Overview
An RNA of 177 nucleotides, treated with 2A3 and DMS and read out base by base. The DMS profile rests on 5,636 reads.
[RMDB]
RNA sequence: GGGAACGACUCGAGUAGAGUCGAAAAACUCUCACUAGUACAUGUGAUGUGCGAUCGAUCACCAUGAGUAGUAGAUGUCAUGAGUGGAUCUCUAGAUGAUCUCAUGCUCUAGACAUGCAGAGCGUAGCAAUCCGGAGAUGUUCGCAUCUCCGGAUUGAAAAGAAACAACAACAACAAC
Reactivity to 2A3 in 0.01 (KOAc 150mM, MgCl2 10mM, bicine 150mM(pH8.5), 24C), signal-to-noise 5, nucleotides 027 to 126: a000c010u000c010u000c010a000c040u040a020g110u090a020c020a040u070g030u050g040a050u070g080u050g110c050g070a080u080c040g020a040u040c010a010c020c010a010u030g030a010g080u150a010g020u050a060g070a210u230g090u040c010a020u020g030a020g100u090g040g070a020u000c030u000c030u090a140g020a290u190g040a020u080c030u000c010a020u070g000c010u020c000u030a070g050a090c030a060u070g030c050a010g000a010g030c040g030u040a050g060
Reactivity to DMS in 0.01 (KOAc 150mM, MgCl2 10mM, bicine 150mM(pH8.5), 24C), signal-to-noise 5, nucleotides 027 to 126: a060c060u010c010u000c030a150c030u000a050g020u010a070c040a020u000g000u000g010a020u000g030u000g010c120g000a060u010c120g010a050u000c010a050c030c030a010u000g000a080g010u000a090g020u010a100g000a100u010g010u020c000a050u000g000a110g030u010g010g000a000u000c010u010c150u010a140g010a110u010g000a040u000c010u000c100a030u000g000c020u000c010u000a110g000a100c150a080u000g030c110a020g000a030g020c060g000u010a100g000